This 177-nucleotide RNA was probed chemically with 2A3 and DMS. The 2A3 profile rests on 1,911 reads. The reactions ran in a buffer of 150 mM KOAc, 10 mM MgCl2 and 150 mM bicine (pH 8.5), at 24 C. For DMS the reverse transcriptase was MarathonRT.
RNA sequence: GGGAACGACUCGAGUAGAGUCGAAAAGGGCCAGAGAAAGAAGCCACUUAAGAAUGUUAAGCGCUCUUGCGUGCUAAAUUUUUGAUUAAUGUAUACAUUAAUAUGCAAAUCGCGCCUCUCUUCUGGACAUACUAGAGCGAUUCGUCGCUCUAGUAUGAAAAGAAACAACAACAACAAC
Reactivity to 2A3 in 0.01 (KOAc 150mM, MgCl2 10mM, bicine 150mM(pH8.5), 24C), signal-to-noise 3, nucleotides 027 to 126: g020g000g010c020c010a040g010a010g030a070a090a010g050a060a010g050c030c030a060c030u040u030a040a020g070a200a110u160g020u100u190a110a070g070c020g000c040u020c000u030u030g010c020g040u010g000c040u090a130a150a190u120u160u030u090u140g010a020u020u020a100a010u070g000u040a160u040a220c000a020u070u050a090a060u070a030u160g010c020a000a020a110u080c040g000c030g000c040c000u030c000u000c020u060u020c010u030g020g000a010
Reactivity to DMS in 0.01 (KOAc 150mM, MgCl2 10mM, bicine 150mM(pH8.5), 24C), signal-to-noise 3, nucleotides 027 to 126: g020g010g010c020c030a070g010a070g010a090a090a060g000a130a070g000c080c040a060c090u000u010a040a050g010a130a090u010g010u010u010a050a070g010c300g000c030u000c080u000u000g010c080g000u000g020c080u000a020a070a070u000u010u010u010u010g000a040u000u000a060a040u000g000u020a100u000a100c020a030u000u000a040a060u000a050u010g000c050a020a050a040u000c090g030c080g000c020c040u000c080u000c060u000u000c010u000g010g010a300
For 2A3 the reverse transcriptase was SuperScript II with manganese.